[RMDB]
Overview
Conditions: 150 mM KOAc, 10 mM MgCl2 and 150 mM bicine (pH 8.5), 24 C. An RNA of 177 nucleotides, treated with DMS and read out base by base. Reactivities are given for positions 27 through 126. Source: RMDB library OK2TST, as collected in RNAgym. The DMS profile rests on 942 reads.
RNA sequence: GGGAACGACUCGAGUAGAGUCGAAAAUUCAAAGGUGUAGUUAGGUAUGAUGCAAAUACUCGGCAAUUUAAUUCUUACGAUUUGACCGACCUAGAGAAUCCAAAAAGUAUGUUAUUCACGGUGAUCGAAUGAACUCGACAUUCGUGUCGAGUUCAUUAAAAGAAACAACAACAACAAC
Reactivity to DMS in 0.01 (KOAc 150mM, MgCl2 10mM, bicine 150mM(pH8.5), 24C), signal-to-noise 2, nucleotides 027 to 126: u000u000c080a050a090a150g000g000u000g030u000a120g000u000u010a020g040g020u030a020u010g000a070u000g000c290a040a040a080u000a060c120u000c030g020g000c030a070a060u000u010u000a030a160u000u000c030u000u000a070c100g010a120u000u010u010g000a060c000c020g000a090c060c020u000a070g000a220g000a040a060u000c050c090a000a010a120a140a090g030u000a080u000g000u000u020a060u000u000c100a060c090g020g020u000g000a050u000c090g000